[RMDB]
RNA sequence: GGGAACGACUCGAGUAGAGUCGAAAAUCCGGAACGCGGUACGCCAUCUCGGAUCGCAACUACGACGAGAAGGUUCACCGCAAGGUGCGCGACCUGCGCCCCGGCGAAACCGUGCUGGGCUACCGGCUCAGGUCAAACUCUUCGGAGUUUGACCUGAAAAAGAAACAACAACAACAAC
Reactivity to DMS in 0.01 (KOAc 150mM, MgCl2 10mM, bicine 150mM(pH8.5), 24C), signal-to-noise 2, nucleotides 027 to 126: u000c000c000g020g000a110a060c080g030c020g040g010u000a050c140g000c010c020a080u000c000u030c000g000g000a170u000c020g050c110a150a130c140u000a170c020g000a040c000g020a020g020a060a070g010g040u000u000c110a060c050c010g000c100a050a060g000g000u020g050c120g000c050g000a110c190c080u010g020c020g000c020c050c020c040g020g010c040g000a050a080a050c100c040g010u000g010c060u000g000g000g000c040u000a070c020c030g020g020c190
Reactivity to 2A3 in 0.01 (KOAc 150mM, MgCl2 10mM, bicine 150mM(pH8.5), 24C), signal-to-noise 1, nucleotides 027 to 126: u000c000c010g010g020a120a050c140g010c000g060g010u060a010c050g000c010c000a020u020c010u010c000g100g220a280u040c010g030c020a120a100c080u300a050c020g040a000c000g000a000g000a040a020g010g000u030u090c060a030c020c010g000c000a000a000g060g000u060g000c060g000c010g010a300c030c040u060g000c010g000c060c020c000c000g030g000c010g020a180a050a020c050c010g070u070g020c030u000g020g030g000c020u070a100c040c000g050g050c050